[RMDB]
RNA sequence: GGGAACGACUCGAGUAGAGUCGAAAACACUAGUUGCCGAACACUGAUAAGUUCCUAAUGCUACAAGGGCUUGAUUUAGAAAAUUUGUAACACUAGGCCCAACAUUCAGGAAAGGGCCCCCAGUUACUCAAUACCUCCAUUUCGAUGGAGGUAUUGAAAAAGAAACAACAACAACAAC
Reactivity to DMS in 0.01 (KOAc 150mM, MgCl2 10mM, bicine 150mM(pH8.5), 24C), signal-to-noise 5, nucleotides 027 to 126: c100a100c140u010a100g020u020u020g040c020c030g010a070a110c120a120c020u010g000a040u010a040a100g000u000u000c000c000u000a020a030u010g010c100u000a020c080a020a050g000g000g020c080u000u010g000a120u020u010u030a090g000a060a080a160a130u030u000u000g000u000a020a020c040a030c100u010a020g010g010c300c030c050a010a100c070a100u020u020c050a050g000g010a060a070a150g020g000g000c010c000c000c030c010a180g010u010u020a020c110
Reactivity to 2A3 in 0.01 (KOAc 150mM, MgCl2 10mM, bicine 150mM(pH8.5), 24C), signal-to-noise 5, nucleotides 027 to 126: c070a010c040u130a050g050u040u090g060c040c020g080a100a020c060a030c070u030g020a070u080a230a060g040u090u110c000c000u030a090a060u080g070c020u050a080c040a120a170g040g000g040c020u030u060g120a160u090u090u110a090g120a060a110a090a110u130u090u130g100u050a060a000c040a010c070u030a060g030g000c030c030c000a020a010c010a030u060u130c030a020g000g120a070a040a040g070g010g010c010c010c000c000c000a030g030u040u060a070c010